[RMDB]
The record gives the reactivity of an RNA of 170 nucleotides to 2A3 and DMS. The DMS profile rests on 10,639 reads. 2A3 adducts were read by reverse transcription with SuperScript II with manganese. The RNA was probed in 150 mM KOAc, 10 mM MgCl2 and 150 mM bicine (pH 8.5) at 24 C. Source: RMDB library 15KLIB, as collected in RNAgym. Reactivities are given for positions 27 through 129.
RNA sequence: GGGAACGACUCGAGUAGAGUCGAAAAGCGUUGUAUGCCAUUCACAGACUUCCCUACGCUGUGGGACAUGCAUCCGUAGACCAUUUCUCUGCUGUAAAUGCUGCUAUGAUCAUGUUAUAGCAACUCCGACGCCCUGUCUUCGGACAGGGCAAAAGAAACAACAACAACAAC
Reactivity to 2A3 in 0.01 (KOAc 150mM, MgCl2 10mM, bicine 150mM(pH8.5), 24C), signal-to-noise 5, nucleotides 027 to 129: g020c030g040u070u010g020u010a040u050g020c000c050a090u080u110c010a000c000a030g100a050c040u050u020c000c030c000u030a000c040g010c020u000g000u040g010g000g030a020c000a020u050g050c000a020u050c080c070g010u050a010g090a090c000c010a030u010u040u000c010u000c030u070g090c030u090g030u240a020a030a030u170g040c050u000g010c010u000a030u030g010a070u080c090a060u230g060u130u030a010u020a020g030c000a000a020c030u020c100c030g090a030c060
Reactivity to DMS in 0.01 (KOAc 150mM, MgCl2 10mM, bicine 150mM(pH8.5), 24C), signal-to-noise 6, nucleotides 027 to 129: g030c040g020u020u060g080u040a020u020g040c060c080a110u000u090c030a040c050a030g050a150c200u030u040c060c020c020u000a090c230g100c030u070g060u000g050g070g000a050c080a040u080g030c150a000u070c080c040g010u040a010g090a140c110c070a080u020u030u070c020u000c110u000g040c030u050g060u050a020a010a120u050g060c020u010g040c020u030a020u060g010a020u030c180a250u050g030u000u000a060u030a080g050c040a090a080c080u040c000c000g030a130c130